[RMDB]
RNA sequence: GGGAACGACUCGAGUAGAGUCGAAAAUUGAAGGUAAAACAGCCUGUGGGUGAAACACACCCACAGGGCCCAUGGGGCGCUAGCACCCUGGUAUCACGGUACCUUUGUGCGCCUGUUUUACCGAAGGGCACACACGCGUUCGCGCGUGUGAAAAGAAACAACAACAACAAC
Reactivity to DMS in 0.01 (KOAc 150mM, MgCl2 10mM, bicine 150mM(pH8.5), 24C), signal-to-noise 1, nucleotides 027 to 129: u040u000g000a130a080g030g000u030a000a020a000a020c000a020g000c000c000u040g030u010g010g060g000u020g030a150a200a090c280a120c000a020c040c010c010a000c000a000g000g000g000c020c000c000a000u110g000g000g000g000c050g010c050u110a080g050c000a000c030c000c020u070g000g000u010a020u020c050a100c070g050g010u020a020c010c040u020u010u030g000u000g000c050g000c010c010u010g020u000u000u000u000a010c030c000g040a090a040g010g000g010c000a210
Reactivity to 2A3 in 0.01 (KOAc 150mM, MgCl2 10mM, bicine 150mM(pH8.5), 24C), signal-to-noise 2, nucleotides 027 to 129: u130u110g110a140a020g010g010u010a000a000a000a000c000a000g000c000c000u000g000u000g000g000g000u020g020a100a050a000c140a020c010a000c040c000c000a000c020a000g000g000g000c000c010c000a030u190g060g060g000g000c010g000c070u060a040g000c000a000c010c000c020u000g000g000u000a000u010c030a040c220g150g000u000a000c010c010u000u000u010g000u000g000c000g000c020c000u000g000u000u000u000u000a000c000c000g000a000a000g020g020g000c070a000
Structure probing data (DMS and 2A3) for a 170-nucleotide construct. Conditions: 150 mM KOAc, 10 mM MgCl2 and 150 mM bicine (pH 8.5), 24 C. It was measured as part of the RMDB library 15KLIB.